About this RNA:
Structure probing data (2A3 and DMS) for a 177-nucleotide construct. For 2A3, 3,247 sequencing reads were counted. Values cover nucleotides 27 to 126.

[RMDB]
RNA sequence: GGGAACGACUCGAGUAGAGUCGAAAAGAACGAUGGGGGGACGCAGGAGGAUAGGGUAAGCGCACUGCUGGAAUAGUGCGUCCAAGCAGUUAGAGGGGUGACGAGGCAAAUCCCGUCACCAUGUACCGAUUUCGGUAUUGUUCGCAAUACCGAAAUCAAAAGAAACAACAACAACAAC
Reactivity to 2A3 in 0.01 (KOAc 150mM, MgCl2 10mM, bicine 150mM(pH8.5), 24C), signal-to-noise 3, nucleotides 027 to 126: g050a090a050c090g050a130u130g020g000g000g000g000g000a020c050g020c060a040g020g060a030g030g000a050u100a070g040g000g040u050a070a020g040c020g000c050a000c000u030g000c020u040g040g030a020a030u050a100g120u080g030c040g020u060c010c000a030a020g010c020a020g030u080u190a060g040a080g120g100g000g000u000g000a000c010g000a220g000g010c030a050a050a090u260c000c010c000g000u000c000a000c010c000a010u080g020u030a060c030c070
Reactivity to DMS in 0.01 (KOAc 150mM, MgCl2 10mM, bicine 150mM(pH8.5), 24C), signal-to-noise 4, nucleotides 027 to 126: g010a100a090c100g000a130u010g010g020g030g000g000g010a070c130g010c120a080g010g000a100g000g000a100u010a080g000g000g010u000a040a120g020c060g020c100a030c030u000g000c070u010g000g000a060a090u020a080g000u000g000c080g010u000c030c040a050a080g010c030a010g000u000u010a090g000a130g020g010g010g020u010g010a020c010g010a090g000g000c130a040a080a140u010c000c000c000g000u000c010a000c020c020a030u010g010u010a080c110c110